[RMDB]
Conditions: 150 mM KOAc, 10 mM MgCl2 and 150 mM bicine (pH 8.5), 24 C. This 177-nucleotide RNA was probed chemically with 2A3 and DMS. DMS adducts were read by reverse transcription with MarathonRT. It was measured as part of the RMDB library OK2TRN. 2A3 adducts were read by reverse transcription with SuperScript II with manganese. Reactivities are given for positions 27 through 126.
RNA sequence: GGGAACGACUCGAGUAGAGUCGAAAAUGCAUCCUCCACUGAGGCAACGUCCUCGAUGUGGGAAGGCAACGGCACAGCGUCCCCGUCAGAGGCCGGCAAGAGAGCUGAAAUCGUACCACAGAGCAUCACGCAAUUUCUAGUUCGCUAGAAAUUGCGUAAAAGAAACAACAACAACAAC
Reactivity to 2A3 in 0.01 (KOAc 150mM, MgCl2 10mM, bicine 150mM(pH8.5), 24C), signal-to-noise 1, nucleotides 027 to 126: u060g000c020a030u030c000c040u000c040c000a090c040u120g010a000g010g000c100a210a160c080g120u150c030c030u000c010g010a060u080g080u120g020g030g050a010a010g180g030c020a070a100c050g060g000c030a030c000a130g030c010g060u040c020c020c000c000g020u040c030a040g010a000g090g000c010c000g000g020c030a010a020g050a010g000a000g110c020u050g040a030a080a070u060c020g020u030a040c000c020a040c030a030g070a040g110c000a040u060c050
Reactivity to DMS in 0.01 (KOAc 150mM, MgCl2 10mM, bicine 150mM(pH8.5), 24C), signal-to-noise 1, nucleotides 027 to 126: u010g050c050a140u000c010c020u010c100c080a040c160u000g030a070g010g010c040a110a100c150g010u000c000c000u000c000g020a010u010g010u010g000g000g020a030a080g060g010c020a070a060c050g000g000c040a100c050a100g010c040g000u000c010c020c020c000g000u010c050a090g010a040g010g010c040c050g040g010c040a040a060g030a080g010a080g000c030u000g020a040a060a100u020c090g000u000a070c040c000a050c070a060g020a090g000c060a060u000c090